[RMDB]
RNA sequence: GGGAACGACUCGAGUAGAGUCGAAAAAGCAUGCCGAGCAUGCGAAAGGAUGGGUGGCGCGUACGGAAACCAUCCCACGGUGCCACCGGCAUGCGAAAGGAUGGCGGCGCCAUCUUGUAUGACUAGCACUCCGGUCCGCCGGAGGCCUCACAGGAUGCACUUUAACCUAUUUCGAUAGGUUAAAGUGAAAAGAAACAACAACAACAAC
Reactivity to DMS in 0.01 (KOAc 150mM, MgCl2 10mM, bicine 150mM(pH8.5), 24C), signal-to-noise 3, nucleotides 027 to 156: a300g020c010a010u000g000c010c040g010a190g030c000a030u030g010c010g010a070a100a080g000g000a080u000g010g020g000u000g020g050c030g010c070g000u010a190c090g000g010a120a070a070c010c000a030u000c000c010c020a160c070g010g020u000g010c000c010a110c100c040g000g010c020a020u010g020c020g000a060a110a100g020g000a040u000g010g030c050g010g020c100g020c000c000a010u000c000u000u010g000u000a080u000g010a080c050u000a070g000c020a190c000u000c000c000g010g000u010c170c300g040c010c000g010g010a020g000g000c020c040u000c050a060c040a100g010g020a130u000g010
Reactivity to 2A3 in 0.01 (KOAc 150mM, MgCl2 10mM, bicine 150mM(pH8.5), 24C), signal-to-noise 7, nucleotides 027 to 156: a000g000c010a010u020g010c040c060g040a030g030c020a010u270g140c030g060a120a060a020g050g000a040u050g010g020g040u110g080g050c090g020c090g120u190a140c070g060g040a110a090a020c010c000a010u000c010c000c000a030c020g000g000u020g010c020c050a150c080c010g000g000c010a000u060g040c010g020a050a030a010g030g020a040u070g040g060c120g040g030c070g020c020c010a000u000c000u010u020g050u050a130u130g050a050c070u070a030g010c050a070c300u000c020c000g010g010u050c090c160g050c020c000g110g000a010g000g000c000c000u050c000a070c000a020g050g020a030u090g000
This 207-nucleotide RNA was probed chemically with DMS and 2A3. DMS adducts were read by reverse transcription with MarathonRT. The 2A3 profile rests on 7,260 reads.